[RMDB]
RNA sequence: GGGAACGACUCGAGUAGAGUCGAAAAAAAAACUUAGGCGUUAAGGUGCAUUUAUUUAACAUUAUCUACCAUGCUGUAGAUGCUGUUAAAGAAAUGAUGACAGCAUUACUCGAUCCUAUUGCUGAAGGAUUGAGCUAUGUUUCGACAUAGCUCAAUCAAAAGAAACAACAACAACAAC
Reactivity to 2A3 in 0.01 (KOAc 150mM, MgCl2 10mM, bicine 150mM(pH8.5), 24C), signal-to-noise 1, nucleotides 027 to 126: a010a010a010a020a010c040u060u010a020g020g020c010g040u040u010a070a000g020g000u030g030c010a010u000u010u020a040u000u020u000a060a010c000a000u050u040a010u000c000u000a010c000c020a100u300g060c150u120g150u000a020g010a000u010g020c000u000g000u010u020a030a010a000g020a000a000a000u060g020a060u070g070a000c020a060g030c020a020u000u090a050c050u030c070g120a090u070c030c020u080a130u120u110g040c040u070g020a040a040g150
Reactivity to DMS in 0.01 (KOAc 150mM, MgCl2 10mM, bicine 150mM(pH8.5), 24C), signal-to-noise 2, nucleotides 027 to 126: a050a030a020a090a060c090u010u000a100g000g000c070g010u000u000a040a050g000g020u000g000c000a000u000u000u010a100u010u000u000a010a010c000a000u010u010a020u000c000u010a020c000c030a150u000g010c170u020g010u000a010g000a010u000g010c130u000g010u000u000a020a000a000g000a030a010a010u000g010a160u000g020a160c090a060g020c040a030u000u000a030c070u010c070g000a050u010c020c030u000a080u000u000g000c080u000g020a090a050g000